[RMDB]
RNA sequence: GGGAACGACUCGAGUAGAGUCGAAAAGAUCUCUAACAAGCCUACGAGUCGACCAGUAGGCUUGCUCUCGCAUACUCUUCGGAGUAUGGUCUUCGGACCGAGAGCGAGGGUCGACUUGAGAUCGAAAGGGUCAGAGGGCCUUCGGGUUCUCUGACCCAAAAGAAACAACAACAACAAC
Reactivity to 2A3 in 0.01 (KOAc 150mM, MgCl2 10mM, bicine 150mM(pH8.5), 24C), signal-to-noise 5, nucleotides 027 to 126: g000a000u000c010u010c020u040a160a030c030a090a020g020c000c010u040a060c040g040a040g100u030c010g020a070c020c000a020g090u050a010g010g060c000u000u000g000c000u000c000u000c000g040c020a010u000a020c000u010c000u020u060c190g120g000a000g000u010a020u040g010g000u000c000u020u060c180g110g010a020c020c000g070a050g010a000g130c000g000a020g000g020g020u030c020g030a050c010u030u030g010a010g010a010u000c010g000a090a080a020
Reactivity to DMS in 0.01 (KOAc 150mM, MgCl2 10mM, bicine 150mM(pH8.5), 24C), signal-to-noise 3, nucleotides 027 to 126: g000a000u000c000u010c000u010a080a160c070a030a020g010c000c000u010a040c070g010a130g000u030c110g020a040c140c060a170g010u010a030g010g010c000u000u000g010c010u000c000u000c010g010c010a140u010a010c010u010c010u000u060c120g040g000a010g020u010a010u020g000g000u000c000u010u030c170g020g000a040c030c010g000a080g000a220g020c020g000a000g010g000g000u000c210g000a110c190u010u000g000a000g000a000u000c000g010a130a110a100

Conditions: 150 mM KOAc, 10 mM MgCl2 and 150 mM bicine (pH 8.5), 24 C.
Chemical mapping of a 177-nucleotide RNA with 2A3 and DMS.
Reactivities are given for positions 27 through 126.